[RMDB]
RNA sequence: GGGAACGACUCGAGUAGAGUCGAAAAUUCAAGCGAUUCGUCGCUUGAACCUGAGGAGACUCAAGCAAAAUUGUUCCCAUUUGCUUUUGCUUUCCUCUUUUAAGUAGUAGUGCUUCGGCACUACUAAGUGGACCUAAUAUUUCGAUAUUAGGUCCACAAAAGAAACAACAACAACAAC
Reactivity to DMS in 0.01 (KOAc 150mM, MgCl2 10mM, bicine 150mM(pH8.5), 24C), signal-to-noise 2, nucleotides 027 to 126: u020u000c000a010a000g010c000g010a030u000u010c220g020u000c000g030c000u010u000g000a000a060c010c010u010g010a010g000g010a010g010a010c000u000c030a010a000g000c000a000a010a020a040u010u010g010u000u000c000c000c000a300u000u000u000g010c000u000u000u000u000g000c120u000u000u000c000c000u000c000u000u000u000u000a080a160g000u000a000g000u000a000g010u000g010c010u000u010c190g030g010c000a000c000u000a000c000u000a010a040
Reactivity to 2A3 in 0.01 (KOAc 150mM, MgCl2 10mM, bicine 150mM(pH8.5), 24C), signal-to-noise 3, nucleotides 027 to 126: u030u000c000a010a000g000c000g020a010u050u130c220g040u020c000g120c000u000u000g000a000a010c000c020u010g010a010g010g010a000g000a010c010u000c020a000a000g010c000a010a020a080a120u150u300g000u000u000c000c000c000a000u000u000u000g000c000u090u020u000u000g030c050u020u030u020c020c000u030c130u160u050u050u110a120a060g010u030a010g000u010a010g000u010g000c000u020u060c250g080g000c010a000c000u010a000c000u000a000a020